[RMDB]
RNA sequence: GGGAACGACUCGAGUAGAGUCGAAAAGAUAUGGAGUUAUGACUUCAACAGCCUAUCUGAUUCGGAAACGAAUCUAGGACAUGAAGGAGUAACUCCUAAGUCAAAGGCCAUGCUUCGGCAUGGCCAACGUUAGUUUAACCUUCGGGUUAAACUAACGAAAAGAAACAACAACAACAAC
Reactivity to DMS in 0.01 (KOAc 150mM, MgCl2 10mM, bicine 150mM(pH8.5), 24C), signal-to-noise 4, nucleotides 027 to 126: g000a010u000a300u010g000g000a040g020u000u000a000u000g010a300c000u000u010c000a030a070c290a240g000c000c000u000a030u030c300u020g000a020u000u000c000g000g000a080a050a190c000g010a020a000u000c000u000a010g000g000a050c070a300u000g010a010a000g010g000a300g030u000a000a010c000u000c000c000u000a010a050g000u000c030a090a080a150g000g010c010c000a020u000g010c010u000u020c280g020g000c000a000u000g020g000c000c010a010a010
Reactivity to 2A3 in 0.01 (KOAc 150mM, MgCl2 10mM, bicine 150mM(pH8.5), 24C), signal-to-noise 2, nucleotides 027 to 126: g010a010u040a040u120g010g010a000g010u010u010a020u060g050a060c000u020u020c030a140a090c070a210g090c010c000u110a140u190c200u140g000a010u000u000c010g010g020a060a070a060c020g000a010a000u000c010u000a010g000g000a030c110a300u300g000a010a010g010g020a030g010u000a010a000c010u000c000c000u000a020a010g020u000c050a110a100a080g010g000c000c000a000u010g010c000u060u190c300g130g000c010a000u000g000g030c000c000a000a000
An RNA of 177 nucleotides, treated with DMS and 2A3 and read out base by base.
Conditions: 150 mM KOAc, 10 mM MgCl2 and 150 mM bicine (pH 8.5), 24 C.
For 2A3, 8,142 sequencing reads were counted.
Source: RMDB library TTRDES, as collected in RNAgym.
The DMS profile rests on 3,802 reads.